[RMDB]
RNA sequence: GGGAACGACUCGAGUAGAGUCGAAAAAGAUGGCCACGUCUGCGGCUGUGAGCGUGAUCCCGAUCCCUGCUGCGGCCGGGUUGCCCAGGAACACCUGGACGCGCUUGGCCUGGAAAUCGUCGAUCAAAAUCAUAGUAGCCUUCGGGCUACUAUGAUUAAAAGAAACAACAACAACAAC
Reactivity to 2A3 in 0.01 (KOAc 150mM, MgCl2 10mM, bicine 150mM(pH8.5), 24C), signal-to-noise 1, nucleotides 027 to 126: a030g080a040u110g020g030c020c010a020c000g070u020c090u120g020c040g050g070c060u030g050u030g080a050g050c070g020u020g030a050u060c050c010c010g020a040u070c010c000c020u060g030c050u070g010c090g030g000c010c030g030g000g030u040u220g000c000c020c010a010g010g010a120a130c150a070c090c000u030g030g000a040c080g010c000g010c000u000u000g000g000c000c030u020g000g020a060a090a020u070c050g060u040c020g050a060u060c070a040a130
Reactivity to DMS in 0.01 (KOAc 150mM, MgCl2 10mM, bicine 150mM(pH8.5), 24C), signal-to-noise 2, nucleotides 027 to 126: a130g010a090u010g010g010c050c030a020c070g000u010c100u020g030c050g020g010c050u000g020u010g000a080g000c070g040u000g000a090u000c010c050c010g010a070u000c040c030c030u010g000c050u010g020c130g010g000c020c010g010g000g010u000u000g050c030c030c000a000g000g000a210a140c300a080c010c010u000g000g010a060c110g000c020g000c030u000u010g000g000c020c020u000g010g000a030a070a070u000c090g020u010c060g000a090u010c070a060a070